[RMDB]
RNA sequence: GGGAACGACUCGAGUAGAGUCGAAAAGAUAUGGAAAUUGUAAGUGCCCACACUAUUCGGAAACGAACGAAUGUGGGAACUACACUGCAAUUUCCUAAGUCAAAAGUGAAUGCUUCGGCAUUCACAACUUCUACCAUGACUUCGGUCAUGGUAGAAGAAAAGAAACAACAACAACAAC
Reactivity to 2A3 in 0.01 (KOAc 150mM, MgCl2 10mM, bicine 150mM(pH8.5), 24C), signal-to-noise 2, nucleotides 027 to 126: g030a010u070a000u110g000g000a000a010a020u010u020g040u130a300a200g010u000g000c000c070c000a000c030a010c010u210a170u110u070c020g010g030a060a100a100c020g010a040a000c070g040a250a210u030g000u000g000g000g000a010a000c030u100a030c040a000c010u030g000c000a000a030u000u020u000c000c000u010a010a020g070u050c020a000a000a100a200g000u000g000a000a000u000g000c020u060u090c300g160g020c020a010u020u000c000a000c010a020a000
Reactivity to DMS in 0.01 (KOAc 150mM, MgCl2 10mM, bicine 150mM(pH8.5), 24C), signal-to-noise 2, nucleotides 027 to 126: g010a020u000a300u000g000g010a040a000a000u000u020g000u010a050a060g060u010g000c000c000c010a000c000a030c090u000a300u000u000c020g000g000a100a070a130c000g010a040a050c130g040a070a080u000g010u000g000g020g010a050a000c030u000a300c000a010c020u000g000c010a010a000u000u000u010c000c000u020a020a130g010u000c080a110a080a090a050g000u000g000a010a030u000g000c000u000u020c230g020g050c010a010u000u000c030a000c010a030a050